[RMDB]
RNA sequence: GGGAACGACUCGAGUAGAGUCGAAAACAUAAAGCCGCCAACCCCAUCUAGCUUAUGCCUCAUUGAAAUCACGCUGUGAAGAAGUUUACUGGAUCUUCCCACUGUAUCUAGGGCACUCCUCAUCGGACACAAUCUUUCGAUUCGUCGAAAGAUUGUGAAAAGAAACAACAACAACAAC
Reactivity to DMS in 0.01 (KOAc 150mM, MgCl2 10mM, bicine 150mM(pH8.5), 24C), signal-to-noise 2, nucleotides 027 to 126: c040a060u010a040a120a180g000c040c030g000c020c060a080a170c060c010c030c030a060u010c050u000a090g010c030u000u000a090u010g000c050c010u000c040a080u000u010g000a030a070a110u010c080a050c140g010c040u000g000u010g000a050a030g000a090a060g010u010u000u010a080c120u000g010g000a090u000c120u020u010c010c010c010a140c110u000g000u010a090u010c050u010a080g020g000g000c060a040c080u010c010c010u000c100a050u010c120g000g000a260
Reactivity to 2A3 in 0.01 (KOAc 150mM, MgCl2 10mM, bicine 150mM(pH8.5), 24C), signal-to-noise 2, nucleotides 027 to 126: c010a020u150a050a170a050g070c000c030g040c080c050a060a070c030c010c010c020a050u040c060u090a040g050c020u090u100a040u120g060c000c030u060c000a050u000u080g060a050a050a060u040c000a020c070g020c050u020g000u020g050a050a040g020a070a020g020u080u140u090a100c050u050g030g050a030u000c030u020u020c000c000c000a020c020u060g070u070a080u040c040u060a030g030g000g000c030a040c020u020c000c010u060c000a100u050c030g080g040a020